This 207-nucleotide RNA was probed chemically with DMS and 2A3. Values cover nucleotides 27 to 156. The reactions ran in a buffer of 150 mM KOAc, 10 mM MgCl2 and 150 mM bicine (pH 8.5), at 24 C. The DMS profile rests on 2,608 reads.
RNA sequence: GGGAACGACUCGAGUAGAGUCGAAAAGAACACGUCUCGGGACGACGCUAAACUCGCCCUGGUCGGGAUGGGUUUAACGACCCCACGGGUUUCCUAGUUCCUAAAACUAGGUGGUGGAGUCAUAUAAAAAACUUCUACACGUUCGCGUGUAGAAGAACUUUUAACACUCGUUCGCGAGUGUUAAAAGAAAAGAAACAACAACAACAAC
Reactivity to DMS in 0.01 (KOAc 150mM, MgCl2 10mM, bicine 150mM(pH8.5), 24C), signal-to-noise 1, nucleotides 027 to 156: g010a060a060c030a100c020g010u000c050u000c030g030g010g020a040c010g010a090c000g040c060u000a060a040a130c150u000c010g020c000c000c000u000g030g030u000c130g000g000g000a040u020g000g020g000u000u000u000a040a040c030g010a170c020c000c020c010a060c030g010g020g010u000u000u000c020c000u000a010g000u000u000c050c100u000a080a090a030a030c010u000a020g000g000u000g010g030u000g000g000a130g010u010c030a100u000a150u000a000a050a070a120a080a060c000u000u000c000u000a010c000a010c000g030u000u010c300g040c030g060u000g040u000a000g000a020a010g010a040a040
Reactivity to 2A3 in 0.01 (KOAc 150mM, MgCl2 10mM, bicine 150mM(pH8.5), 24C), signal-to-noise 2, nucleotides 027 to 156: g050a070a040c090a030c090g020u000c010u030c050g000g040g010a100c300g000a030c040g010c180u010a020a010a010c000u000c010g040c000c000c010u070g040g060u070c060g010g090g000a120u030g020g010g000u020u070u050a070a020c020g010a010c000c000c010c010a030c060g060g020g000u030u030u020c000c000u000a010g010u020u040c030c060u160a080a050a010a010c010u010a020g000g030u010g030g020u040g020g080a080g030u060c050a040u100a000u270a180a070a030a010a010a030c000u000u000c000u010a000c010a000c010g030u050u040c160g020c000g110u000g000u000a020g000a000a000g000a000a010